[RMDB]
RNA sequence: GGGAACGACUCGAGUAGAGUCGAAAACGGAAAUUCAUCAACAUGUAUGGGUUUGAACCUGGCGAAUAUUCAUACAUACGCUUCGUAGACCCAUUGACUGGAGCACAAAUCGAAGAAAACGUGUAUGGUUAACGGAUCACUUCGGUGAUCCGUUAACAAAAGAAACAACAACAACAAC
Reactivity to DMS in 0.01 (KOAc 150mM, MgCl2 10mM, bicine 150mM(pH8.5), 24C), signal-to-noise 1, nucleotides 027 to 126: c080g000g000a030a140a140u010u010c020a010u000c060a100a280c260a100u000g000u000a000u000g010g020g040u020u020u000g000a090a090c030c000u000g010g010c020g010a080a020u020a090u010u000c030a000u000a030c020a040u010a100c110g000c030u000u000c060g020u000a110g000a020c050c020c000a020u010u000g050a110c170u000g050g020a080g070c070a050c080a020a110a080u020c050g000a070a050g000a020a030a070a100c200g000u000g000u000a040u000g000
Reactivity to 2A3 in 0.01 (KOAc 150mM, MgCl2 10mM, bicine 150mM(pH8.5), 24C), signal-to-noise 1, nucleotides 027 to 126: c020g050g040a000a030a070u090u000c010a110u090c000a050a170c000a130u080g100u200a030u020g000g040g040u010u090u080g070a030a050c000c030u090g060g060c000g090a120a020u130a040u150u170c040a010u040a090c000a010u070a020c100g000c020u000u050c010g030u010a010g040a070c030c000c030a010u000u040g000a010c150u010g030g040a070g060c110a030c060a070a130a010u030c060g050a030a020g030a040a140a000a000c110g020u000g010u020a080u010g020